[RMDB]
RNA sequence: GGGAACGACUCGAGUAGAGUCGAAAACAUGUCAUGUAUAGAUGAUCGUACCUAGGAUCUGAUACGUGUAGUCGUACAGGUACCGCUCCAUGCAUGAGGAUCCACUAGCACUCCAUGUACUAGGUACGAGACUCAGAGACUUCGGUCUCUGAGUCUCAAAAGAAACAACAACAACAAC
Reactivity to DMS in 0.01 (KOAc 150mM, MgCl2 10mM, bicine 150mM(pH8.5), 24C), signal-to-noise 2, nucleotides 027 to 126: c140a060u030g010u020c060a020u000g030u020a070u050a080g010a130u010g020a120u020c060g010u000a010c030c030u000a080g000g010a060u000c050u000g000a160u000a030c040g050u000g000u000a030g040u000c210g000u000a040c050a040g020g030u000a030c030c070g030c090u000c040c040a060u000g010c020a000u010g020a140g010g000a030u000c030c040a090c170u010a080g000c070a040c000u010c130c080a090u000g000u000a050c090u000a010g030g000u010a010c110
Reactivity to 2A3 in 0.01 (KOAc 150mM, MgCl2 10mM, bicine 150mM(pH8.5), 24C), signal-to-noise 2, nucleotides 027 to 126: c060a030u190g060u110c010a050u060g140u120a140u060a230g100a100u080g040a040u130c060g000u010a000c000c010u020a040g040g000a010u020c030u080g080a120u010a030c030g030u030g080u130a090g100u060c030g000u000a030c010a080g070g080u070a200c000c020g010c010u000c020c010a050u030g040c020a010u020g000a040g010g020a060u010c040c020a070c110u080a030g050c010a020c080u020c070c040a040u130g030u020a080c020u060a020g000g000u020a030c060
The record gives the reactivity of an RNA of 177 nucleotides to DMS and 2A3.
The reactions ran in a buffer of 150 mM KOAc, 10 mM MgCl2 and 150 mM bicine (pH 8.5), at 24 C.
For DMS, 1,234 sequencing reads were counted.
For 2A3, 1,880 sequencing reads were counted.
Values cover nucleotides 27 to 126.
DMS adducts were read by reverse transcription with MarathonRT.